[RMDB]
RNA sequence: GGGAACGACUCGAGUAGAGUCGAAAAGGGGUCGAUGUUCUUUGUAGAACCGUAAGGGUCUGAUGACCGACCCUGUACAAACACGCUGAAGCCUCCACGGCGUGUUUGUACAGGGUCGCAAGGACCUAUCGGUUCUGGGGCAUCGACGGAGGCACCCGUUACAUCCCGAGUUCGCUCGGGAUGUAACAAAAGAAACAACAACAACAAC
Reactivity to 2A3 in 0.01 (KOAc 150mM, MgCl2 10mM, bicine 150mM(pH8.5), 24C), signal-to-noise 1, nucleotides 027 to 156: g000g000g000g000u010c010g010a000u010g020u030u020c010u140u290u300g300u300a050g000a000a000c000c000g000u100a180a300g090g000g000u040c050u040g120a200u030g000a100c000c010g000a000c020c000c000u010g000u010a000c010a000a000a000c000a000c000g000c000u010g040a090a000g020c000c000u010c000c000a000c010g000g000c000g000u000g000u000u000u010g020u000a000c030a000g000g010g000u000c000g000c000a020a130g000g000a000c000c000u000a060u060c000g010g000u000u000c000u000g000g000g000g000c010a000u000c010g000a000c010g000g000a000g000g000c000a020c000c030c010

The data come from the RNA Mapping Database (RMDB), library RNAMAK. Structure probing data (2A3) for a 207-nucleotide construct. The reactions ran in a buffer of 150 mM KOAc, 10 mM MgCl2 and 150 mM bicine (pH 8.5), at 24 C.